[RMDB]
RNA sequence: GGGAACGACUCGAGUAGAGUCGAAAAGCGCGGCCCCUUUGUGAAUGCCAAUGCGCGCGCCGGUUUCAUCGGCCUUUCCAGCCGCGACCGUUUCCCGGAACUGGUGCGCUCGGUCGUGGAGGGCCUAAUGGUAUUAUUAUUUCGAUAAUAAUACCAUAAAAGAAACAACAACAACAAC
Reactivity to DMS in 0.01 (KOAc 150mM, MgCl2 10mM, bicine 150mM(pH8.5), 24C), signal-to-noise 9, nucleotides 027 to 126: g010c050g020c090g020g000c020c070c040c110u000u000u000g010u010g010a120a080u010g010c050c040a120a120u010g010c190g010c000g010c010g000c010c010g000g000u000u000u000c030a120u010c130g000g000c010c020u000u010u000c030c040a270g010c020c030g010c050g010a070c120c070g000u000u000u000c010c010c020g020g000a030a020c020u000g010g010u000g000c010g010c010u000c060g010g030u000c110g010u000g010g000a050g010g010g010c020c020u010a090
Reactivity to 2A3 in 0.01 (KOAc 150mM, MgCl2 10mM, bicine 150mM(pH8.5), 24C), signal-to-noise 5, nucleotides 027 to 126: g060c040g000c020g020g020c020c010c020c000u070u250u200g120u100g120a160a100u300g020c010c030a150a170u260g000c030g000c000g000c000g000c030c010g030g030u040u040u030c050a110u120c060g000g000c000c000u160u300u040c020c010a020g020c010c010g020c020g040a070c040c040g030u030u030u010c000c000c000g000g000a030a020c010u030g000g040u040g020c000g010c010u010c030g010g020u030c030g040u060g010g020a030g000g000g020c000c010u020a030